[RMDB]
RNA sequence: GGGAACGACUCGAGUAGAGUCGAAAAGAGUAAUGGGCGCCCAAGGUGAGAUGAAGCUGUAGUCUCACUGGAAGGACUAGAGGUUAGAGGAGACCCGCGCAAAACAAGAAACAGCUUCAUCAAGAGAACUAUGGCCUAUAUUCGUAUAGGCCAUAGUAAAAGAAACAACAACAACAAC
Reactivity to 2A3 in 0.01 (KOAc 150mM, MgCl2 10mM, bicine 150mM(pH8.5), 24C), signal-to-noise 6, nucleotides 027 to 126: g080a010g040u150a110a060u140g020g040g000c010g010c000c000c020a010a020g070g040u090g050a100g000a010u010g000a010a000g000c010u000g000u030a050g040u020c010u010c040a050c040u020g050g040a060a050g060g020a020c050u050a030g010a060g070g060u110u070a020g000a060g160g030a030g020a040c000c010c010g030c010g000c030a040a080a050a020c050a070a070g050a080a110a010c000a010g000c000u040u010c000a030u010c020a020a030g070a020g010a070
Reactivity to DMS in 0.01 (KOAc 150mM, MgCl2 10mM, bicine 150mM(pH8.5), 24C), signal-to-noise 6, nucleotides 027 to 126: g000a090g010u020a080a060u010g000g000g020c030g010c020c020c030a110a090g000g000u020g010a170g000a010u010g000a010a010g000c000u000g000u000a130g010u000c010u000c040a070c060u000g000g010a090a110g000g010a080c060u010a070g000a100g020g000u010u020a070g000a110g000g000a080g000a060c040c050c050g000c130g020c120a060a070a080a090c180a090a080g000a090a090a030c020a000g010c000u000u000c000a020u000c020a100a100g020a120g000a100